Structure probing data (DMS and 2A3) for a 177-nucleotide construct.
[RMDB]
RNA sequence: GGGAACGACUCGAGUAGAGUCGAAAAGAUAUGGAGUCUCGCCAAGGGAGCGAUACAUUCGGAAACGAAUGUUUCGCGAGGAUCUUGGACCCGAGACUCCUAAGUCAAAGGGCUCUUCGGAGCCCAACUUGCUUAAAUUGUUCGCAAUUUAAGCAAGAAAAGAAACAACAACAACAAC
Reactivity to DMS in 0.01 (KOAc 150mM, MgCl2 10mM, bicine 150mM(pH8.5), 24C), signal-to-noise 5, nucleotides 027 to 126: g000a060u000a300u000g000g000a020g000u000c010u000c030g020c020c010a010a020g000g000g000a030g020c000g020a020u000a000c000a010u000u000c000g010g000a160a150a230c010g010a020a010u000g010u000u000u000c000g020c000g020a100g000g010a030u000c010u000u000g000g000a110c160c300c110g000a010g000a010c010u000c000c000u000a010a080g000u000c030a080a140a170g000g010g010c010u000c010u010u000c190g030g010a020g000c010c000c000a000a020
Reactivity to 2A3 in 0.01 (KOAc 150mM, MgCl2 10mM, bicine 150mM(pH8.5), 24C), signal-to-noise 3, nucleotides 027 to 126: g050a040u090a080u180g000g000a000g010u010c010u000c010g020c010c010a020a000g010g020g000a030g000c000g000a000u010a030c000a010u000u010c000g030g040a050a110a080c010g000a000a000u010g000u020u050u000c000g000c010g000a070g010g000a000u010c010u000u020g000g030a070c080c110c040g000a000g010a000c010u000c000c000u000a020a010g000u010c010a040a030a140g000g010g000c010u000c010u090u160c300g190g000a010g000c000c000c010a000a000
In probing experiments dimethyl sulfate is read out at A N1 and C N3, which are open when not base-paired. The reactions ran in a buffer of 150 mM KOAc, 10 mM MgCl2 and 150 mM bicine (pH 8.5), at 24 C.